[RMDB]
RNA sequence: GGGAACGACUCGAGUAGAGUCGAAAAUCAUAAUAGCCCAACAAUUACCAGCAUAUUACAACUGUAGUUGCGGCUCUAAGGAAAUGGUAUGCCCAGAAAACACAGAAACGUUAUUGCAGAGGCAUAAGGGAUGCGUCCCACAACUACCUUGCGGAACGGUAGGUGCGUUAUUCGUAACGCACCUACCAAAAGAAACAACAACAACAAC
Reactivity to 2A3 in 0.01 (KOAc 150mM, MgCl2 10mM, bicine 150mM(pH8.5), 24C), signal-to-noise 1, nucleotides 027 to 156: u110c000a000u010a180a140u030a060g010c010c030c030a000a000c000a000a010u110u100a030c250c000a060g090c150a100u170a240u210u260a270c110a170a080c020u070g000u070a010g030u040u100g010c210g030g010c000u000c000u140a080a250g040g000a000a210a300u070g100g000u040a010u080g010c000c000c000a000g070a000a060a000a000c180a000c040a100g150a150a270a000c030g020u140u110a060u070u060g000c060a000g030a110g040g000c000a010u010a060a110g000g000g000a000u010g030c030g100u000c000c000c000a000c010a090a040c000u060a060c060c060u000u000g030c010g060g140a080a000c000
Overview: The record gives the reactivity of an RNA of 207 nucleotides to 2A3. 2A3 adducts were read by reverse transcription with SuperScript II with manganese. 2A3 is a SHAPE reagent: it acylates the 2'-hydroxyl of flexible nucleotides of all four kinds. The reactions ran in a buffer of 150 mM KOAc, 10 mM MgCl2 and 150 mM bicine (pH 8.5), at 24 C.